[RMDB]
RNA sequence: GGGAACGACUCGAGUAGAGUCGAAAAAUAAAUAGCGUAAUGGACAUUGGCAGUGUACGCUAAGUGUGUGUUGUAUACCUAACGUCCAAUUGAACACACACACAGUUGGACCUAAUGUCCAAAAAAAGUAAUCCGUACUGUUCGCAGUACGGAUUACAAAAGAAACAACAACAACAAC
Reactivity to 2A3 in 0.01 (KOAc 150mM, MgCl2 10mM, bicine 150mM(pH8.5), 24C), signal-to-noise 2, nucleotides 027 to 126: a030u210a000a020a040u080a000g000c020g000u010a060a060u090g000g000a000c000a030u020u040g050g080c070a040g070u010g030u120a020c010g020c030u010a090a110g020u000g000u000g000u000g020u020u110g110u040a060u060a140c000c030u050a090a020c060g070u000c030c000a010a020u060u070g040a060a000c000a000c000a000c000a010c000a000c000a000g070u060u050g040g020a020c000c010u020a020a020u050g030u030c000c040a070a000a000a020a000a000a020
Reactivity to DMS in 0.01 (KOAc 150mM, MgCl2 10mM, bicine 150mM(pH8.5), 24C), signal-to-noise 1, nucleotides 027 to 126: a090u010a070a110a080u020a000g000c020g030u000a030a160u000g000g010a020c020a020u000u000g010g020c150a130g000u010g000u000a010c000g000c000u000a050a130g030u000g000u000g000u000g010u010u040g010u000a130u000a080c080c080u010a090a200c120g020u000c000c030a010a050u000u010g000a090a050c010a030c000a000c000a020c010a030c070a080g000u010u000g000g000a060c030c030u000a020a050u000g000u000c020c000a000a000a020a060a060a060a040